[RMDB]
RNA sequence: GGGAACGACUCGAGUAGAGUCGAAAAGGAGUACUGCCAGCGGGCAUGACCGACCCACCAGGGGCGCCGCCGCCGGCGCUCGCAGGCCGCGGAUGAAGAAGAAAACCCGGCGCCGCUCGACCCGGAGGUCGGAGAAAAGGUUCGCCUUUUCUCCGACAAAAGAAACAACAACAACAAC
Reactivity to 2A3 in 0.01 (KOAc 150mM, MgCl2 10mM, bicine 150mM(pH8.5), 24C), signal-to-noise 2, nucleotides 027 to 126: g060g040a070g020u080a070c040u050g040c010c010a080g040c080g060g020g020c050a070u070g050a030c000c020g020a060c020c000c000a040c050c040a030g000g010g010g010c010g020c020c000g050c030c000g040c050c060g050g000c000g030c020u040c010g000c040a000g090g030c030c020g040c070g040g000a070u200g120a060a180g060a030a050g040a050a150a000a010c000c010c000g010g000c000g000c000c010g020c010u030c040g030a050c010c010c000g000g090a070g050
Reactivity to DMS in 0.01 (KOAc 150mM, MgCl2 10mM, bicine 150mM(pH8.5), 24C), signal-to-noise 1, nucleotides 027 to 126: g000g000a120g020u000a110c100u000g000c000c000a150g030c050g020g040g110c020a060u000g020a090c070c010g020a090c050c020c030a120c090c130a060g000g000g000g000c000g040c040c010g020c040c150g020c060c080g000g010c000g050c030u000c050g000c040a150g000g020c080c030g000c070g030g010a080u010g010a060a090g010a120a110g020a080a080a190a070c060c040c000g010g010c060g000c080c020g000c050u040c050g000a120c020c000c010g000g000a120g000